Structure probing data (DMS and 2A3) for a 177-nucleotide construct. For 2A3, 879 sequencing reads were counted. Values are in units of 0.01, from 0 to 300, in steps of 10.
RNA sequence: GGGAACGACUCGAGUAGAGUCGAAAACAUUGCCCGCACUCUUGAUGGCAAUGACGCUCAUUGCUGCAACAGUGUCCUUAAAAUUUGUGCGGUUUGGCCAGUCGGGAGCGAUGAUUCUGGGUGGCGACUCGCCAUCGCAGUUCGCUGCGAUGGCGAGAAAAGAAACAACAACAACAAC
Reactivity to DMS in 0.01 (KOAc 150mM, MgCl2 10mM, bicine 150mM(pH8.5), 24C), signal-to-noise 1, nucleotides 027 to 126: c190a090u010u000g020c090c000c080g030c000a040c030u030c150u000u000g010a110u000g000g000c020a010a010u000g000a240c300g030c170u000c010a030u000u000g000c000u000g010c020a030a050c110a040g010u010g000u000c030c030u020u030a020a150a100a080u000u000u000g010u000g010c060g040g020u000u000u010g010g000c010c040a030g010u010c000g010g010g000a030g020c020g040a100u000g000a130u000u030c050u000g030g030g020u000g020g050c010g030a060
Reactivity to 2A3 in 0.01 (KOAc 150mM, MgCl2 10mM, bicine 150mM(pH8.5), 24C), signal-to-noise 1, nucleotides 027 to 126: c030a040u140u140g060c000c000c000g000c000a000c020u060c020u080u170g050a180u090g180g030c000a010a010u020g040a070c110g000c140u120c040a040u030u070g000c000u000g000c000a040a020c000a060g030u010g040u100c000c000u100u090a140a210a180a100u070u170u130g020u030g060c100g020g000u060u030u130g190g000c060c000a080g180u030c000g040g000g010a040g070c060g070a110u160g010a000u070u080c010u030g070g000g040u060g000g010c000g050a100